[RMDB]
RNA sequence: GGGAACGACUCGAGUAGAGUCGAAAACCGAGUGAGUUCGCUCACUCGGAAAGAAGUGUGCGCAUACUGCUGCGUCAGUAGCGACAAGAGCAGCAAGCAAAAAAACAAACCUGUUCGCAGGUUUGAAACAUUGGGUAGACUUCGGUCUACCCAAUGUAAAAGAAACAACAACAACAAC
Reactivity to DMS in 0.01 (KOAc 150mM, MgCl2 10mM, bicine 150mM(pH8.5), 24C), signal-to-noise 2, nucleotides 027 to 126: c010c000g000a010g030u000g000a020g000u000u010c300g000c010u000c020a010c000u010c010g000g000a010a050a090g010a090a070g020u000g010u020g030c070g010c050a080u010a050c070u000g010c010u010g010c260g000u000c010a040g010u010a090g000c100g000a050c050a050a180g000a050g000c010a030g010c090a060a070g020c060a000a010a020a080a040a060a170c000a020a000a010c000c000u000g010u000u010c130g000c000a000g000g000u000u000u000g000a060a080
Reactivity to 2A3 in 0.01 (KOAc 150mM, MgCl2 10mM, bicine 150mM(pH8.5), 24C), signal-to-noise 1, nucleotides 027 to 126: c000c000g000a000g000u000g000a000g000u030u180c180g070c070u000c000a000c000u020c000g020g000a030a020a030g060a100a060g110u080g020u060g100c040g000c020a060u050a130c030u070g050c030u090g070c020g000u010c020a010g050u080a020g080c050g040a050c030a020a070g010a000g130c020a000g000c000a120a010g010c030a050a130a010a000a000a000a060c000a000a020a000c000c020u000g070u050u080c230g000c080a040g050g000u050u000u000g000a050a040